[RMDB]
RNA sequence: GGGAACGACUCGAGUAGAGUCGAAAAGGAGUAAAUGUUCUACUGCGCGAGGGCAUAGGGCAGAUUCUCAAUAUUCCCUGGGCUCUGCUGUCCGAUGCCCUCACGCAGUACAAGAAUUUCCUCCUCGAUGUCUUUAGCCCUUCGGGGCUAAAGACAUAAAAGAAACAACAACAACAAC
Reactivity to 2A3 in 0.01 (KOAc 150mM, MgCl2 10mM, bicine 150mM(pH8.5), 24C), signal-to-noise 1, nucleotides 027 to 126: g010g010a010g010u000a010a000a000u000g030u180u300c000u010a000c000u000g000c000g000c010g000a020g000g000g010c020a010u030a020g000g040g030c010a000g000a020u080u030c000u000c000a020a050u180a130u200u110c000c000c020u000g020g030g020c050u040c090u140g100c010u000g000u000c010c000g000a020u000g000c010c000c000u010c000a000c000g000c000a000g000u000a000c010a000a080g070a050a020u010u000u000c030c000u000c000c000u010c030g020

The record gives the reactivity of an RNA of 177 nucleotides to 2A3. Reactivities are given for positions 27 through 126. The reactions ran in a buffer of 150 mM KOAc, 10 mM MgCl2 and 150 mM bicine (pH 8.5), at 24 C. For 2A3, 901 sequencing reads were counted.